[RMDB]
RNA sequence: GGGAACGACUCGAGUAGAGUCGAAAAUCAUCUGCAUUCGGGCAUCUCUGAAUGGUCUGUUAAAGGGCUGUGGAGUCAGGCAGCAUUUUCUGCUGGUUACAUUCCAUCCUGCCCUCCUAGCCUCUUGGGUUGUUUGGGAAGCAGGGAGAAACCCUUCGAAGAUAGAUCCUUUCGAGGAUCUAUCUUCAAAAGAAACAACAACAACAAC
Reactivity to DMS in 0.01 (KOAc 150mM, MgCl2 10mM, bicine 150mM(pH8.5), 24C), signal-to-noise 2, nucleotides 027 to 156: u000c020a070u010c040u000g010c010a170u000u010c040g010g000g000c040a070u010c040u000c030u020g010a070a050u000g010g010u010c060u000g020u000u010a100a030a050g020g020g030c000u010g000u000g020g000a080g030u000c050a140g020g000c000a030g010c060a120u000u000u020u000c170u000g000c000u020g010g010u000u000a140c100a090u000u000c000c020a030u000c040c030u010g020c000c030c000u010c040c040u000a080g000c000c000u000c060u000u000g010g020g040u000u000g020u000u000u000g020g010g010a040a120g030c010a030g010g010g010a150g000a110a070a120c050c000c030u000u000c070
Reactivity to 2A3 in 0.01 (KOAc 150mM, MgCl2 10mM, bicine 150mM(pH8.5), 24C), signal-to-noise 2, nucleotides 027 to 156: u050c020a030u030c010u000g010c020a130u070u070c040g020g030g010c040a040u010c080u010c000u070g080a180a130u150g100g070u080c070u070g100u120u160a120a060a050g000g000g000c010u010g020u030g070g000a020g020u050c030a020g080g000c000a000g000c020a040u180u060u200u220c060u050g000c000u040g000g230u080u040a050c030a050u060u090c020c010a030u040c040c070u020g000c020c010c030u000c000c010u000a020g000c030c020u060c050u030u050g010g010g000u020u000g010u000u080u080g140g000g000a030a040g020c030a000g000g000g040a070g040a040a090a030c000c000c010u040u090c030

An RNA of 207 nucleotides, treated with DMS and 2A3 and read out base by base. Values cover nucleotides 27 to 156. DMS (dimethyl sulfate) methylates the pairing face of unpaired adenines and cytosines.